An RNA of 207 nucleotides, treated with DMS and 2A3 and read out base by base. The reactions ran in a buffer of 150 mM KOAc, 10 mM MgCl2 and 150 mM bicine (pH 8.5), at 24 C.
RNA sequence: GGGAACGACUCGAGUAGAGUCGAAAACUUAUCCGGUUUUAACGCUGUUUUAGUGGCGCAAAGGUUUACGGAUAAACAACUAAUAAUUAAACCUUUUGUGUGCGAAACGUGGUUGUUUAACGUACUCACUGCCCCCAGGGAUUCGUCCCUGGGGGAAGACAUUCUAAUUAUUCGUAAUUAGAAUGUCAAAAGAAACAACAACAACAAC
Reactivity to DMS in 0.01 (KOAc 150mM, MgCl2 10mM, bicine 150mM(pH8.5), 24C), signal-to-noise 1, nucleotides 027 to 156: c100u000u000a050u010c000c000g010g020u020u020u020u020a250a050c010g020c010u000g000u010u000u010u030a180g040u000g030g000c040g030c000a040a090a050g090g010u000u010u000a110c000g000g020a030u000a010a010a150c060a060a140c000u020a090a140u010a070a130u010u000a060a050a030c000c020u000u000u000u000g000u000g030u010g020c040g000a100a110a040c000g040u000g020g000u020u000g020u000u000u000a010a130c020g040u000a080c020u010c060a120c020u000g000c000c010c000c000c030a020g030g040g010a080u000u000c300g020u000c000c000c000u010g000g040g010g000g000a000a000
Reactivity to 2A3 in 0.01 (KOAc 150mM, MgCl2 10mM, bicine 150mM(pH8.5), 24C), signal-to-noise 6, nucleotides 027 to 156: c010u020u020a000u000c000c000g000g050u020u010u010u050a060a040c030g000c030u060g200u170u140u120u280a110g040u190g080g000c010g000c030a020a010a000g000g000u000u000u000a000c000g000g000a010u040a050a100a010c040a040a020c030u220a060a130u150a220a020u180u130a030a010a010c010c000u030u050u090u110g030u000g000u010g010c060g020a090a050a030c020g020u060g030g010u070u020g010u030u060u070a040a000c010g010u020a020c010u030c060a060c040u070g020c000c010c000c000c000a000g000g000g000a010u030u040c120g030u020c060c000c000u000g000g020g000g000g000a000a000
For 2A3 the reverse transcriptase was SuperScript II with manganese. It was measured as part of the RMDB library M2RFPK. For DMS, 2,434 sequencing reads were counted.